[RMDB]
RNA sequence: GGGAACGACUCGAGUAGAGUCGAAAAGCACCGACGAGAGUCGGUGCAGUCAGCGCGAGCUGACAAAGUGUACAACGUGACAGCUGGGGAAUGAACUCGUACACGACAGCCUGACAGAUCCUGGAGACAGGUAGUCAGGCAGUCAAAGCUGCAUGAACAGGUAAUUUACUUUCGAGUAAAUUACCUGAAAAGAAACAACAACAACAAC
Reactivity to 2A3 in 0.01 (KOAc 150mM, MgCl2 10mM, bicine 150mM(pH8.5), 24C), signal-to-noise 2, nucleotides 027 to 156: g000c000a000c000c000g000a000c010g010a020g030a000g060u010c000g050g000u000g000c000a000g000u000c000a000g010c020g020c030g050a030g010c000u000g000a000c000a000a130a000g040u040g020u010a090c080a190a070c180g050u040g180a030c010a010g000c000u040g000g010g010g080a070a170u160g070a160a080c000u000c090g050u040a020c020a010c030g010a000c020a010g000c000c000u010g000a010c010a020g110a090u170c000c000u000g010g000a050g000a050c000a000g000g010u030a010g010u000c000a000g020g000c010a010g010u000c030a000a050a000g000c000u010g000c010a070u120g050a070a050
Chemical mapping of a 207-nucleotide RNA with 2A3. 2A3 adducts were read by reverse transcription with SuperScript II with manganese. The data come from the RNA Mapping Database (RMDB), library OK3TST.